[RMDB]
An RNA of 207 nucleotides, treated with DMS and 2A3 and read out base by base.
RNA sequence: GGGAACGACUCGAGUAGAGUCGAAAAUCACAUUCGUGUGAAGAACGGAUAUGGAGCGCUAAUCUCGCCAUUCCUAAGACAGCACUCUCGGAAACGAGAGUGUCGAGGAAUGGACCCGAGACAACGCUCCUAAGUCAGGUCCCGAUUUCGAUCGGAAGAGACUAAAACGGUUCGCCGUUUUAGUCUCAAAAGAAACAACAACAACAAC
Reactivity to DMS in 0.01 (KOAc 150mM, MgCl2 10mM, bicine 150mM(pH8.5), 24C), signal-to-noise 2, nucleotides 027 to 156: u000c030a060c030a100u010u000c270g000u000g060u040g000a100a140g050a120a110c000g040g000a080u000a130u010g020g000a010g010c040g000c000u000a100a140u010c030u000c000g010c000c000a040u000u000c000c000u010a180a210g010a140c300a110g010c010a010c000u000c000u000c010g020g020a060a010a110c000g010a010g010a010g030u000g000u000c010g030a040g010g020a010a010u000g000g000a080c110c300c300g010a020g040a050c020a080a030c000g000c000u010c000c000u000a000a040g000u000c010a060g010g010u000c000c010c000g030a300u000u000u000c080g000a270u000c010g010g010a080a160
Reactivity to 2A3 in 0.01 (KOAc 150mM, MgCl2 10mM, bicine 150mM(pH8.5), 24C), signal-to-noise 2, nucleotides 027 to 156: u020c000a020c020a050u040u120c290g040u070g000u000g070a060a090g030a180a040c040g030g020a000u000a010u040g000g000a000g000c020g000c020u080a120a140u050c000u000c020g020c020c000a000u010u000c000c000u060a170a000g010a010c000a000g020c000a000c000u000c000u010c000g000g010a000a000a000c000g000a000g000a000g010u000g000u020c000g010a000g000g020a000a020u010g020g000a000c060c070c040g000a000g010a000c010a020a020c010g010c000u000c000c000u000a000a010g000u010c010a020g030g050u080c020c020c000g000a010u070u160u160c130g050a040u030c040g060g020a120a040

Conditions: 150 mM KOAc, 10 mM MgCl2 and 150 mM bicine (pH 8.5), 24 C. The 2A3 profile rests on 2,068 reads. Values cover nucleotides 27 to 156. 2A3 adducts were read by reverse transcription with SuperScript II with manganese.